[RMDB]
RNA sequence: GGGAACGACUCGAGUAGAGUCGAAAAGGGGCCCUGAGUUCCACAGGUGACAAAAUGGAGCAUGCCCUGGUGCUGUGUGCACUGCUGGUCCUGGAGAGUGGUCUCUGGAUGGUCAGGGGCUCACUCAGUCCCACUUCAGACUCACCCCCUAGGUGUCUCCAUCAUGGACAUUCGUGUCCAUGAUGGAAAAAGAAACAACAACAACAAC
Reactivity to 2A3 in 0.01 (KOAc 150mM, MgCl2 10mM, bicine 150mM(pH8.5), 24C), signal-to-noise 1, nucleotides 027 to 156: g050g000g010g000c000c000c080u000g000a000g010u140u020c010c040a040c130a070g100g080u060g060a050c030a030a140a040a010u250g000g000a040g060c020a020u200g010c090c010c040u060g020g000u010g000c060u040g010u160g120u210g150c010a000c000u020g000c000u010g000g280u000c010c000u010g000g030a070g000a000g120u020g010g010u000c000u000c000u050g080g000a260u160g080g000u120c000a000g000g000g050g000c110u160c060a000c000u050c010a060g060u100c000c000c000a050c020u090u080c000a000g000a020c000u000c040a030c030c010c000c000c000u000a000g010g140u050g020u000c000
The record gives the reactivity of an RNA of 207 nucleotides to 2A3. The data come from the RNA Mapping Database (RMDB), library OK3TST. Reactivities are given for positions 27 through 156.